Overview
The record gives the reactivity of an RNA of 207 nucleotides to 2A3 and DMS. For DMS the reverse transcriptase was MarathonRT. For DMS, 7,290 sequencing reads were counted. The data come from the RNA Mapping Database (RMDB), library OK3TST.
RNA sequence: GGGAACGACUCGAGUAGAGUCGAAAAGAUGGAGGGUCAGGCCUCGGACGCCUCCUAUAAGAUGUAACUAUUACGAGGCCAUUAAUGGCGUUUUCGCCUAGGUGCACGCCGGCGUGCGUGGCACCGUAAGACUUAAUGAAUAACACGCCGGAUACAAACGUAAUACUAUCUUCGGAUAGUAUUACGUAAAAGAAACAACAACAACAAC
Reactivity to 2A3 in 0.01 (KOAc 150mM, MgCl2 10mM, bicine 150mM(pH8.5), 24C), signal-to-noise 4, nucleotides 027 to 156: g110a050u140g010g000a010g000g010g000u010c020a010g010g000c010c000u020c010g000g000a020c050g160c020c010u000c040c010u030a090u040a080a030g040a010u130g040u140a090a120c100u050a080u140u070a020c010g000a000g000g000c000c000a000u020u090a030a040u060g000g010c020g050u050u020u180u300c020g010c010c000u010a070g010g000u000g000c000a000c010g010c000c000g020g000c000g010u020g000c040g000u030g060g040c000a000c000c000g000u010a010a050g020a000c010u030u100a050a030u200g100a060a050u130a110a020c000a000c000g000c020c000g000g040a120u170a080c100a050a150
Reactivity to DMS in 0.01 (KOAc 150mM, MgCl2 10mM, bicine 150mM(pH8.5), 24C), signal-to-noise 3, nucleotides 027 to 156: g010a170u000g010g010a070g020g050g030u000c040a070g050g030c010c000u000c020g020g000a040c010g000c000c000u010c000c000u000a080u000a110a110g000a190u000g020u010a090a190c100u000a170u020u010a110c020g020a040g020g010c000c010a100u010u000a040a070u000g020g000c000g010u000u000u000u000c020g040c000c010u000a040g000g020u000g020c000a060c040g010c000c010g000g040c040g110u000g010c020g010u000g020g010c020a030c020c050g000u010a030a060g020a110c120u000u000a090a100u000g020a150a130u000a080a030c020a020c010g000c000c000g030g010a210u010a050c100a110a110